[RMDB]
RNA sequence: GGGAACGACUCGAGUAGAGUCGAAAAGGCAACGAGCGAGACCCGCACUUCUAGUUGCCAGCAAUACCCUUGAGGUAGUUGGGUACACUAGGAGGACUGCCGCUGCUAAAGCGGAGGAAGGAACGGGUACAGGAAUCUGGUUCGCCAGAUUCCUGUAAAAAGAAACAACAACAACAAC
Reactivity to 2A3 in 0.01 (KOAc 150mM, MgCl2 10mM, bicine 150mM(pH8.5), 24C), signal-to-noise 3, nucleotides 027 to 126: g110g020c050a060a030c100g040a020g040c020g020a030g050a070c010c000c010g020c020a030c000u000u000c000u000a000g010u010u010g010c000c010a000g000c000a000a010u000a000c000c010c000u100u300g150a230g040g000u010a010g000u000u010g020g010g010u020a030c020a000c150u000a010g000g000a010g000g020a000c010u040g000c000c010g000c000u040g010c060u270a190a030a010g010c020g010g010a000g030g000a010a010g000g000a070a040c020g000g000g000
Reactivity to DMS in 0.01 (KOAc 150mM, MgCl2 10mM, bicine 150mM(pH8.5), 24C), signal-to-noise 3, nucleotides 027 to 126: g010g000c090a050a050c090g020a070g010c080g020a120g000a070c000c010c000g010c210a090c010u000u000c000u010a000g010u000u010g000c000c000a080g000c010a020a060u000a000c000c000c010u030u020g030a190g010g000u000a010g000u000u000g000g000g000u000a010c130a000c020u000a020g000g000a010g000g000a000c000u010g010c010c000g000c010u010g010c160u050a060a080a030g010c000g000g000a010g020g000a050a000g000g000a180a260c020g000g000g010